An RNA of 177 nucleotides, treated with DMS and 2A3 and read out base by base. For 2A3, 4,024 sequencing reads were counted. Conditions: 150 mM KOAc, 10 mM MgCl2 and 150 mM bicine (pH 8.5), 24 C.
RNA sequence: GGGAACGACUCGAGUAGAGUCGAAAAGAUAUGGACGGAUCGACAUGCUCGACAGGAUCGGAAACGAUCCCUAGAGCAACAGCGAGUCCGUCCUAAGUCAAAAGAACAUUCGUUCGCGAAUGUUCAAGACUGAUUCUUGGUUCGCCAAGAAUCAGUCAAAAGAAACAACAACAACAAC
Reactivity to DMS in 0.01 (KOAc 150mM, MgCl2 10mM, bicine 150mM(pH8.5), 24C), signal-to-noise 3, nucleotides 027 to 126: g020a080u000a300u000g000g000a010c000g030g000a240u010c010g050a110c070a280u010g000c000u000c000g000a110c300a050g000g000a000u000c010g000g000a120a080a170c000g000a010u000c000c000c000u000a260g000a000g000c010a030a000c300a090g000c000g000a030g020u000c000c000g000u000c000c010u000a000a040g000u000c040a090a110a090a040g010a030a000c000a000u010u000c000g000u000u010c180g050c020g000a010a000u000g020u000u000c010a070a070
Reactivity to 2A3 in 0.01 (KOAc 150mM, MgCl2 10mM, bicine 150mM(pH8.5), 24C), signal-to-noise 2, nucleotides 027 to 126: g030a030u070a010u160g000g010a010c020g000g000a010u020c010g100a100c080a090u130g010c000u000c000g010a020c010a040g000g010a000u000c020g000g000a110a080a000c030g000a010u020c000c020c000u000a000g010a000g010c010a000a010c010a000g070c000g010a050g300u050c010c020g000u010c000c000u000a020a010g030u000c050a030a030a040a190g010a010a000c010a010u010u020c010g050u040u090c300g000c020g140a020a000u010g010u020u000c000a010a000